Chemical mapping of a 207-nucleotide RNA with 2A3. For 2A3, 556 sequencing reads were counted. The reactions ran in a buffer of 150 mM KOAc, 10 mM MgCl2 and 150 mM bicine (pH 8.5), at 24 C.

[RMDB]
RNA sequence: GGGAACGACUCGAGUAGAGUCGAAAAAAGCGGCUAGGGCAUGUCGAGGACCCGUCACCUCGUUAAUCAAUGGGAAAAUCGUAACUGCAAACGACGAUACGUUCGCACUGGCAGCCUAAGGGCCGCCGUCCUCUGCCUAGUUCACUGACGGGCUAGUAGUCGCACGCUUGUUCGCAAGCGUGCGACUAAAAGAAACAACAACAACAAC
Reactivity to 2A3 in 0.01 (KOAc 150mM, MgCl2 10mM, bicine 150mM(pH8.5), 24C), signal-to-noise 1, nucleotides 027 to 156: a040a000g020c030g010g000c040u050a060g020g080g000c020a160u050g040u020c000g010a000g000g020a010c010c000c030g020u000c000a020c020c000u000c030g030u020u120a010a040u130c070a030a160u080g110g000g000a040a020a020a020u060c010g010u070a090a140c020u160g140c190a110a180a000c210g090a010c000g020a020u030a070c160g050u020u030c050g000c130a020c070u010g010g020c020a000g000c000c050u090a050a150g030g030g000c000c020g020c000c000g000u000c000c000u040c080u020g000c010c020u070a180g000u090u140c110a070c060u050g000a010c000g000g000g000c020u000a030g000u000

For 2A3 the reverse transcriptase was SuperScript II with manganese.